Chemical mapping of a 170-nucleotide RNA with 2A3 and DMS.
RNA sequence: GGGAACGACUCGAGUAGAGUCGAAAAUCCUCCUCUAGUUUCUUGAGUUUCUUCUUGGUCUUCCGGAGGUCCCUCUCGAGCUCUUCCGCUUUCUUUCUUCCAUUGACCCACUGCUCGAGGACGUCCUAUACUAGCAGUUUCGACUGCUAGAAAAGAAACAACAACAACAAC
Reactivity to 2A3 in 0.01 (KOAc 150mM, MgCl2 10mM, bicine 150mM(pH8.5), 24C), signal-to-noise 9, nucleotides 027 to 129: u020c000c010u030c010c010u040c030u040a080g050u040u080u030c040u040u110g060a060g050u030u040u020c010u050u010c010u030u050g030g010u030c000u080u020c030c020g030g010a020g010g040u040c020c000c000u020c010u010c020g040a040g010c010u000c000u080u020c030c020g020c020u030u070u020c000u030u060u000c000u060u000c040c010a100u020u120g020a020c010c010c010a050c030u000g000c000u000c000g000a000g020g060a090c010g010u000c000c000u040a050u060a090
Reactivity to DMS in 0.01 (KOAc 150mM, MgCl2 10mM, bicine 150mM(pH8.5), 24C), signal-to-noise 8, nucleotides 027 to 129: u020c040c020u030c040c020u040c060u030a000g040u020u040u000c070u010u010g030a200g000u050u030u010c000u040u010c060u030u020g020g030u030c060u010u010c000c030g000g000a060g020g010u050c040c020c020u040c030u030c050g030a020g040c040u040c060u030u020c010c010g010c090u030u040u010c040u010u010u010c010u040u040c040c030a070u010u010g010a050c020c030c070a090c040u000g000c000u000c000g030a030g010g010a090c090g020u020c000c020u000a060u050a110
The DMS profile rests on 55,819 reads. Conditions: 150 mM KOAc, 10 mM MgCl2 and 150 mM bicine (pH 8.5), 24 C. The data come from the RNA Mapping Database (RMDB), library 15KLIB. For 2A3, 109,040 sequencing reads were counted.